[RMDB]
RNA sequence: GGGAACGACUCGAGUAGAGUCGAAAAGCACCUCCGUCUCUGCAGCCUGCCAUGUAUAGGUAUCUACGGCAGGAGAGUCCACUGUGGUCAGCGCUGCACCAGGGGCUGCUGAGCGGCAGCUCCAUCAUCGGGGAAAGGAAUUCGUUCCUUUCCCCGAAAAAGAAACAACAACAACAAC
Reactivity to DMS in 0.01 (KOAc 150mM, MgCl2 10mM, bicine 150mM(pH8.5), 24C), signal-to-noise 1, nucleotides 027 to 126: g000c040a140c020c060u000c040c040g040u000c010u000c070u000g020c060a080g050c000c000u000g020c000c000a020u000g020u000a060u000a100g020g030u000a190u000c040u000a050c030g010g000c090a060g010g000a090g040a110g000u010c020c040a130c140u000g010u040g000g000u020c100a090g020c150g030c040u000g010c070a120c180c210a210g000g000g010g000c050u010g000c010u000g010a150g010c080g000g000c010a050g000c010u000c000c000a040u000c130a090
Reactivity to 2A3 in 0.01 (KOAc 150mM, MgCl2 10mM, bicine 150mM(pH8.5), 24C), signal-to-noise 1, nucleotides 027 to 126: g050c040a070c040c040u060c040c010g150u070c040u000c010u120g030c010a010g030c000c000u000g040c000c010a080u060g060u060a100u060a230g040g040u060a130u080c010u020a040c070g120g010c080a040g080g000a020g000a010g000u060c050c030a040c080u160g010u050g070g010u170c040a010g070c020g010c110u030g000c060a050c000c040a100g000g000g010g000c040u000g000c010u030g090a100g080c060g020g000c000a000g000c020u000c040c000a030u080c010a040